Structure probing data (DMS and 2A3) for a 177-nucleotide construct. The reactions ran in a buffer of 150 mM KOAc, 10 mM MgCl2 and 150 mM bicine (pH 8.5), at 24 C. For DMS the reverse transcriptase was MarathonRT.

[RMDB]
RNA sequence: GGGAACGACUCGAGUAGAGUCGAAAAUUGAUGAAGCGAUCUUACCAGAAGAGGCGCUUGUUGCACCAAAGUAUCUUAGUGCUCAAGACUUAAUUCUAAUGUCUGAUGUCGUUAUCACUGAUUACUCCAAGAUUUUCGGAUUCGUCCGAAAAUCUUGAAAAGAAACAACAACAACAAC
Reactivity to DMS in 0.01 (KOAc 150mM, MgCl2 10mM, bicine 150mM(pH8.5), 24C), signal-to-noise 2, nucleotides 027 to 126: u000u000g000a100u000g000a060a080g020c010g000a030u010c190u000u000a020c050c110a040g010a110a020g000a100g000g000c230g010c020u000u010g030u010u000g010c030a020c000c040a070a050a160g010u000a100u000c100u000u000a070g030u000g020c010u000c000a030a020g030a040c050u000u010a110a110u010u000c070u010a100a150u010g000u010c060u000g010a040u000g000u000c020g040u010u000a090u010c010a030c090u000g000a020u000u000a100c120u010c000
Reactivity to 2A3 in 0.01 (KOAc 150mM, MgCl2 10mM, bicine 150mM(pH8.5), 24C), signal-to-noise 1, nucleotides 027 to 126: u030u000g000a070u070g000a040a000g010c010g000a000u000c010u050u000a050c060c080a000g000a040a030g020a090g070g090c090g070c160u000u000g050u090u020g000c010a020c010c010a230a000a030g130u170a240u100c090u010u120a030g000u030g000c000u000c000a000a010g020a070c040u160u150a040a060u200u050c030u050a080a070u070g040u100c020u040g030a170u090g030u020c000g040u040u050a210u220c000a020c050u000g050a030u010u070a070c000u000c070